Structure probing data (2A3 and DMS) for a 207-nucleotide construct.

[RMDB]
RNA sequence: GGGAACGACUCGAGUAGAGUCGAAAAGUAUAAAAUCUGCAAGUAGUGCGAUUGUUGGAAUCACCGUACCUAUUUAGGUUUACGCUCCAAGAUCGGUGGAUAGCAGCCCUAUCAAUAUCUAGGAGAAAAAACCCAGGACUGUUCGCAGUCCUGGGAACAAUGGUUAAAUGUUCGCAUUUAACCAUUGAAAAGAAACAACAACAACAAC
Reactivity to 2A3 in 0.01 (KOAc 150mM, MgCl2 10mM, bicine 150mM(pH8.5), 24C), signal-to-noise 4, nucleotides 027 to 156: g030u000a060u090a270a090a020a040u040c030u110g030c040a050a070g070u150a050g090u170g110c050g020a080u020u080g090u100u060g050g060a070a050u100c030a010c040c010g010u040a020c010c000u070a140u270u230u270a020g000g010u020u080u020a020c020g000c010u000c010c000a020a000g010a020u030c040g020g050u030g060g010a020u030a030g030c050a020g010c010c010c020u050a060u080c040a070a080u030a030u250c020u040a030g030g000a020g000a110a050a010a030a030a020c000c000c000a000g000g000a000c000u010g030u070u120c160g000c110a000g000u000c000c000u000g000g020g000a000a000
Reactivity to DMS in 0.01 (KOAc 150mM, MgCl2 10mM, bicine 150mM(pH8.5), 24C), signal-to-noise 3, nucleotides 027 to 156: g010u030a120u000a080a070a060a040u000c020u010g000c010a070a160g010u000a090g050u000g010c010g010a110u000u000g020u000u000g000g000a180a090u000c060a060c080c020g000u000a050c020c010u000a150u000u000u010a020g030g020u010u000u000a050c030g020c050u010c020c010a050a050g000a050u000c070g060g050u000g020g010a080u000a070g010c020a260g000c130c140c010u000a080u000c020a060a090u000a070u000c020u000a120g000g010a080g030a000a050a080a150a070a090c000c000c000a020g000g010a020c010u010g020u000u020c260g020c020a020g000u000c000c000u000g000g000g000a010a010